This 177-nucleotide RNA was probed chemically with 2A3 and DMS. Reactivities are given for positions 27 through 126. 2A3 adducts were read by reverse transcription with SuperScript II with manganese. Conditions: 150 mM KOAc, 10 mM MgCl2 and 150 mM bicine (pH 8.5), 24 C. DMS adducts were read by reverse transcription with MarathonRT.
RNA sequence: GGGAACGACUCGAGUAGAGUCGAAAAGUCCAGCGAGGGAAGCAUCUGGCUAGUGGCCAGUCCUUCCGGCGUAAUAAUUUGCGGUUCAUCUUCGGCAUUCACCCGCAGGGUACAGAGCGUUAAUGCCCAUGAUGAAAAUCUUCGGAUUUUCAUCAUGAAAAGAAACAACAACAACAAC
Reactivity to 2A3 in 0.01 (KOAc 150mM, MgCl2 10mM, bicine 150mM(pH8.5), 24C), signal-to-noise 3, nucleotides 027 to 126: g060u000c010c020a020g010c020g020a060g020g050g020a020a000g000c020a030u110c020u010g000g010c030u050a090g210u160g300g000c000c000a000g000u010c020c000u010u000c010c020g220g010c000g020u030a020a040u150a090a100u160u090u130g000c030g000g000u030u080c030a080u000c090u060u050c020g010g000c010a030u030u030c020a050c020c020c010g000c050a050g000g020g040u130a090c060a050g080a020g060c050g050u060u070a060a000u070g010c000c000
Reactivity to DMS in 0.01 (KOAc 150mM, MgCl2 10mM, bicine 150mM(pH8.5), 24C), signal-to-noise 5, nucleotides 027 to 126: g010u000c010c020a160g000c030g010a070g010g000g000a030a020g010c120a050u010c010u000g000g010c020u010a170g010u010g010g010c000c000a010g010u000c300c010u000u000c000c000g000g000c020g000u000a090a080u010a090a100u010u010u000g000c040g000g000u010u010c070a090u000c050u000u000c050g010g000c020a040u000u000c080a180c300c000c020g010c050a060g000g000g000u010a080c150a090g010a110g010c070g010u000u000a040a070u000g000c010c020